An RNA of 177 nucleotides, treated with 2A3 and DMS and read out base by base.
The RNA was probed in 150 mM KOAc, 10 mM MgCl2 and 150 mM bicine (pH 8.5) at 24 C.
2A3 adducts were read by reverse transcription with SuperScript II with manganese.
It was measured as part of the RMDB library OK1LIB.
For DMS, 60,418 sequencing reads were counted.
[RMDB]
RNA sequence: GGGAACGACUCGAGUAGAGUCGAAAAUCAAUAGUAGAAUCUUACAAAUCGUCGUAUUCUACUAGGAGUAUGUGACGAUUGAUACACUACAUACUCAUUAGUCAGUAGUGUAUAUGAACUGACUGAAGAUAGUAUUGUGAUUCGUCGCGAUACUAUCAAAAGAAACAACAACAACAAC
Reactivity to 2A3 in 0.01 (KOAc 150mM, MgCl2 10mM, bicine 150mM(pH8.5), 24C), signal-to-noise 9, nucleotides 027 to 126: u110c020a020a080u020a020g010u000a000g020a020a020u020c050u090u120a080c080a090a220a220u160c100g080u020c030g020u080a010u000u000c000u010a040c010u010a050g040g020a010g020u030a020u040g060u040g030a010c020g010a030u010u090g060a050u070a100c070a010c030u030a000c000a020u020a000c010u020c030a070u060u110a010g010u000c030a000g000u040a020g040u040g150u110a070u030a050u220g070a060a040c020u030g030a010c010u020g020a060a010
Reactivity to DMS in 0.01 (KOAc 150mM, MgCl2 10mM, bicine 150mM(pH8.5), 24C), signal-to-noise 9, nucleotides 027 to 126: u030c070a090a140u010a010g010u000a000g000a010a020u020c160u020u020a060c070a080a070a070u030c160g000u000c180g000u020a020u000u000c000u000a010c020u000a020g010g010a030g010u010a010u000g010u000g010a030c030g000a030u010u010g000a110u030a080c200a080c070u010a010c020a030u000a020c020u000c060a210u030u010a030g010u000c030a010g010u000a100g020u000g010u020a050u040a080u030g010a070a060c020u000g000a020c010u000g010a090a080